[RMDB]
RNA sequence: GGGAACGACUCGAGUAGAGUCGAAAAAAAGUAUGGAUUUUCUGAGCUUCAUCAUUAUUGAACGUGCCAUGCGACCUUAAUUUCCACAAGUUCAUUUGAUAUGCUUCACUUUGUUGAGUGAGAAGGCUCGUAGGGAGUGGUUCGCCACUCCCUACGAAAAAGAAACAACAACAACAAC
Reactivity to DMS in 0.01 (KOAc 150mM, MgCl2 10mM, bicine 150mM(pH8.5), 24C), signal-to-noise 1, nucleotides 027 to 126: a070a090a100g000u010a000u010g000g010a260u000u000u000u010c080u010g000a050g000c020u000u010c130a040u010c030a050u000u000a050u010u000g010a060a030c010g020u020g030c030c010a000u000g000c020g040a100c150c070u000u020a060a100u000u000u010c030c010a090c170a040a060g010u000u000c010a070u000u010u010g000a010u000a050u000g020c110u010u020c030a010c050u000u000u000g000u000u000g000a050g000u010g010a030g020a180a100g010g020c120